Notes
The record gives the reactivity of an RNA of 177 nucleotides to DMS. In probing experiments dimethyl sulfate is read out at A N1 and C N3, which are open when not base-paired. The data come from the RNA Mapping Database (RMDB), library OK2TRN. Values cover nucleotides 27 to 126.
RNA sequence: GGGAACGACUCGAGUAGAGUCGAAAAUCUGUGAUCACUAGAGCUCUAGCUACACCAUGCAUGAUCGUACCGGAUCGAGACUAGCUAGCCAUGACUGAUCGCGACUCUAGCAUGAUGAUCGUGUGUGCAACACGCGGUGCUUCGGCACCGCGUGUUGAAAAGAAACAACAACAACAAC
Reactivity to DMS in 0.01 (KOAc 150mM, MgCl2 10mM, bicine 150mM(pH8.5), 24C), signal-to-noise 1, nucleotides 027 to 126: u020c130u000g080u000g030a050u000c070a020c050u000a110g000a130g010c130u000c060u010a040g030c090u000a040c100a100c120c050a130u030g000c020a090u000g010a020u000c050g000u000a140c300c270g010g020a020u000c040g040a070g010a110c140u000a000g000c010u000a040g000c240c090a090u000g000a160c120u000g000a010u010c060g000c030g020a090c020u000c010u020a070g000c180a070u010g000a050u000g040a100u000c020g000u020g030u000g050u000g040